[RMDB]
RNA sequence: GGGAACGACUCGAGUAGAGUCGAAAAGUCAGCUACGGUAACAAAAACCCGAGUGUCAGCAUACCAUGACUCGACCAAAGACGAGUGGGUGUAUAGAAAUGUUAACGUUUAUGAAGUUGACAACUCAAGCCAAUAUAUAGUUCGCUAUAUAUUGGCUAAAAGAAACAACAACAACAAC
Reactivity to DMS in 0.01 (KOAc 150mM, MgCl2 10mM, bicine 150mM(pH8.5), 24C), signal-to-noise 2, nucleotides 027 to 126: g000u000c010a020g000c010u010a040c020g000g000u000a020a030c020a040a110a090a170a060c030c020c060g010a130g020u010g010u010c030a130g010c050a060u010a120c080c060a060u010g010a220c220u000c030g000a090c120c130a070a100a160g000a060c050g000a160g020u000g010g000g010u010g010u000a080u010a120g010a050a090a100u000g000u000u010a020a030c010g000u000u010u010a130u030g010a080a040g030u000u000g000a010c020a070a100c040u000c030a070
Reactivity to 2A3 in 0.01 (KOAc 150mM, MgCl2 10mM, bicine 150mM(pH8.5), 24C), signal-to-noise 7, nucleotides 027 to 126: g000u000c010a000g000c010u020a010c020g020g000u020a030a020c030a020a120a040a050a050c010c040c050g050a070g040u150g050u040c020a010g000c010a050u090a300c030c010a040u090g050a050c010u010c030g070a090c050c090a140a090a020g080a050c040g000a020g030u080g010g090g000u020g030u010a130u020a090g130a030a100a020u050g000u030u010a030a010c020g000u000u070u110a210u220g090a070a020g000u010u010g010a000c020a050a090c040u020c060a040
Structure probing data (DMS and 2A3) for a 177-nucleotide construct. Source: RMDB library OK2TST, as collected in RNAgym. 2A3 adducts were read by reverse transcription with SuperScript II with manganese. Values cover nucleotides 27 to 126. For DMS, 12,709 sequencing reads were counted. The RNA was probed in 150 mM KOAc, 10 mM MgCl2 and 150 mM bicine (pH 8.5) at 24 C.